[RMDB]
Background: The record gives the reactivity of an RNA of 177 nucleotides to DMS and 2A3. Conditions: 150 mM KOAc, 10 mM MgCl2 and 150 mM bicine (pH 8.5), 24 C. DMS adducts were read by reverse transcription with MarathonRT.
RNA sequence: GGGAACGACUCGAGUAGAGUCGAAAAUCGCCGGCCUGGGAGAUGUCCCCAUCGCCCGUGCCGUGGAGGGCAUGAUGAACCACCUGGCCCUCAAGGCCGGGGCCUCUCCCGAGGAGUGGAGGCUCACUCAGUUGUUUACUUUCGAGUAAACAACUGAAAAAGAAACAACAACAACAAC
Reactivity to DMS in 0.01 (KOAc 150mM, MgCl2 10mM, bicine 150mM(pH8.5), 24C), signal-to-noise 2, nucleotides 027 to 126: u000c080g010c040c000g010g030c030c030u000g030g020g000a010g000a030u000g010u010c040c020c040c040a130u000c180g000c020c050c080g020u000g010c000c000g000u020g000g020a090g000g010g010c010a090u010g020a080u010g010a060a100c080c060a110c050c030u010g030g010c010c020c030u010c070a180a180g000g000c000c060g000g000g000g010c010c080u000c010u000c020c000c010g010a090g000g000a130g020u000g010g010a090g000g020c020u000c060a130c120
Reactivity to 2A3 in 0.01 (KOAc 150mM, MgCl2 10mM, bicine 150mM(pH8.5), 24C), signal-to-noise 1, nucleotides 027 to 126: u090c000g030c040c020g060g000c020c010u000g000g000g020a020g010a020u020g120u100c000c040c000c000a080u120c030g030c000c070c000g080u110g000c020c010g060u140g180g030a030g000g020g000c010a020u130g050a110u090g070a180a070c030c010a050c040c070u060g120g000c030c000c000u020c040a010a020g000g010c030c050g000g020g020g020c000c000u000c010u000c000c040c000g050a080g040g000a020g020u160g050g080a060g010g000c050u040c010a060c010
Reactivities are given for positions 27 through 126. 2A3 is a SHAPE reagent: it acylates the 2'-hydroxyl of flexible nucleotides of all four kinds. High DMS reactivity at an A or C suggests that its Watson-Crick edge is free.